[RMDB]
RNA sequence: GGGAACGACUCGAGUAGAGUCGAAAAGCUCUUCAGCGCCGAUGGUAGUUGGGGCCUUGCCCCUGCGAGAGUAGGACGCUGCCAAGCAACUAAUGUUCCACAGUAGCUCAGUGGUAGAGCAAUCGGCGUGAAUAGUGCCUUUCGAGGCACUAUUCACAAAAGAAACAACAACAACAAC
Reactivity to DMS in 0.01 (KOAc 150mM, MgCl2 10mM, bicine 150mM(pH8.5), 24C), signal-to-noise 2, nucleotides 027 to 126: g010c040u000c020u020u020c040a070g010c000g030c010c000g010a150u090g020g000u000a130g020u010u010g010g000g010g040c040c230u000u020g020c000c020c000c000u000g000c000g000a190g000a050g000u010a140g000g010a100c030g010c000u010g020c080c200a090a080g000c060a060a110c090u000a100a110u020g000u000u000c010c010a080c080a060g010u000a100g010c010u000c130a080g000u010g000g000u010a100g010a040g010c040a130a120u010c110g010g010c150
Reactivity to 2A3 in 0.01 (KOAc 150mM, MgCl2 10mM, bicine 150mM(pH8.5), 24C), signal-to-noise 1, nucleotides 027 to 126: g000c000u020c010u170u090c020a020g020c010g000c020c000g060a060u000g050g000u030a010g000u000u020g000g000g040g020c020c170u100u300g000c000c000c000c000u020g010c040g000a130g000a000g000u010a020g040g000a000c000g010c000u000g000c020c000a080a020g030c000a010a070c030u090a130a110u180g040u070u050c020c010a060c070a070g130u190a050g010c000u020c070a050g060u090g170g080u100a110g010a020g000c000a020a090u080c100g050g000c060
This 177-nucleotide RNA was probed chemically with DMS and 2A3. The reactions ran in a buffer of 150 mM KOAc, 10 mM MgCl2 and 150 mM bicine (pH 8.5), at 24 C. The DMS profile rests on 1,745 reads.